The record gives the reactivity of an RNA of 207 nucleotides to DMS and 2A3.
The 2A3 profile rests on 2,269 reads.
Conditions: 150 mM KOAc, 10 mM MgCl2 and 150 mM bicine (pH 8.5), 24 C.
The data come from the RNA Mapping Database (RMDB), library RNAMAK.
[RMDB]
RNA sequence: GGGAACGACUCGAGUAGAGUCGAAAAGGGGUCGAGACUUGUCAGCACUCUCAAGAGCGCAGGCUGAAGCCUCCACGGCCUGAACUACGCUCGAAGGAGUGCUUGGAUUUAGUCUCGACGGAGGCACCCAAAACCGUAGGCGUUCGCGCCUACGGAAUCCAAAUCUAUGGUUCGCCAUAGAUUUGGAAAAAGAAACAACAACAACAAC
Reactivity to DMS in 0.01 (KOAc 150mM, MgCl2 10mM, bicine 150mM(pH8.5), 24C), signal-to-noise 1, nucleotides 027 to 156: g050g020g020g060u010c010g000a020g030a050c020u060u010g000u010c030a050g020c000a050c000u000c000u010c010a030a300g000a050g050c010g050c000a110g020g000c020u000g040a050a090g030c020c000u000c020c030a300c130g040g040c010c000u000g020a080a140c100u010a270c020g030c030u000c000g010a260a120g050g010a030g010u020g010c040u000u020g000g000a050u010u000u000a000g010u010c010u010c020g010a000c020g030g000a010g120g030c020a170c030c000c030a080a090a070a120c010c020g090u000a010g000g030c010g040u000u000c300g030c080g000c000c040u000a010c010g000g000a000a050
Reactivity to 2A3 in 0.01 (KOAc 150mM, MgCl2 10mM, bicine 150mM(pH8.5), 24C), signal-to-noise 2, nucleotides 027 to 156: g160g020g030g000u010c000g000a010g010a000c010u040u030g010u040c110a060g010c000a010c010u000c000u040c100a140a040g010a000g000c020g000c010a000g000g000c000u020g050a090a020g040c000c000u000c000c020a010c020g010g020c010c020u030g030a050a060c120u190a050c110g010c000u000c010g010a030a010g010g000a010g000u000g020c000u000u060g030g000a000u060u020u200a000g000u000c000u010c000g000a000c000g000g000a000g000g000c030a040c000c000c000a030a080a030a060c000c000g000u000a000g000g000c010g020u040u030c220g000c010g000c120c000u000a000c000g000g000a000a020
Source information
Reactivities are given for positions 27 through 156.